[RMDB]
RNA sequence: GGGAACGACUCGAGUAGAGUCGAAAAGAUAUGGAAAUAGGAACCGUCUAUAGGCGUUGAAAAUUUGUUACUCUCGGAAACGAGAGUAACAAAUUGGAGCCUAAACGACGAAACUAUUUCCUAAGUCCAUUCCACAAAUGUUCGCAUUUGUGGAAUGAAAAGAAACAACAACAACAAC
Reactivity to DMS in 0.01 (KOAc 150mM, MgCl2 10mM, bicine 150mM(pH8.5), 24C), signal-to-noise 2, nucleotides 027 to 126: g010a050u010a300u000g020g000a010a030a000u010a000g000g030a170a280c300c010g000u000c000u020a300u000a040g000g010c020g000u000u050g000a140a190a010a000u000u000u000g000u000u000a020c000u000c000u000c000g000g000a090a120a170c000g010a010g000a000g010u020a000a000c000a000a000a010u000u000g010g010a110g030c000c000u000a000a030a120c300g000a030c000g020a050a110a300c010u000a030u010u010u000c000c000u020a060a150g000u000c030